[RMDB]
RNA sequence: GGGAACGACUCGAGUAGAGUCGAAAAGAUAUGGAGUGGCGAGCUUUUGACGAGCGUACUAUCGGAAACGAUAGUCGCUCGAUAAGCUCGCACUCCUAAGUCAAAACCAGUAACUUCGGUUACUGGACUAUCACUUGAAGUUCGCUUCAAGUGAUAGAAAAGAAACAACAACAACAAC
Reactivity to DMS in 0.01 (KOAc 150mM, MgCl2 10mM, bicine 150mM(pH8.5), 24C), signal-to-noise 6, nucleotides 027 to 126: g000a050u000a300u010g000g000a020g020u000g020g040c010g020a020g010c000u000u000u010u000g010a230c260g010a010g010c000g020u020a020c000u000a000u000c010g010g000a110a070a180c000g010a010u000a000g010u000c010g020c000u000c000g010a020u000a010a020g020c000u000c000g020c000a000c000u000c000c000u000a010a070g010u010c030a130a090a170a200c010c000a010g000u000a000a010c000u000u020c200g040g000u000u000a000c000u000g000g000a160
Reactivity to 2A3 in 0.01 (KOAc 150mM, MgCl2 10mM, bicine 150mM(pH8.5), 24C), signal-to-noise 9, nucleotides 027 to 126: g010a010u070a030u160g000g020a030g020u170g190g300c010g000a010g020c030u160u190u250u300g250a230c170g000a000g010c020g050u220a020c000u000a000u010c000g040g000a070a020a020c010g010a000u000a000g000u000c000g000c000u000c000g000a000u010a000a000g000c000u000c000g000c000a000c000u010c000c000u000a010a000g010u000c030a010a010a090a220c010c010a000g000u000a000a010c010u070u170c300g150g000u010u010a000c000u000g000g000a060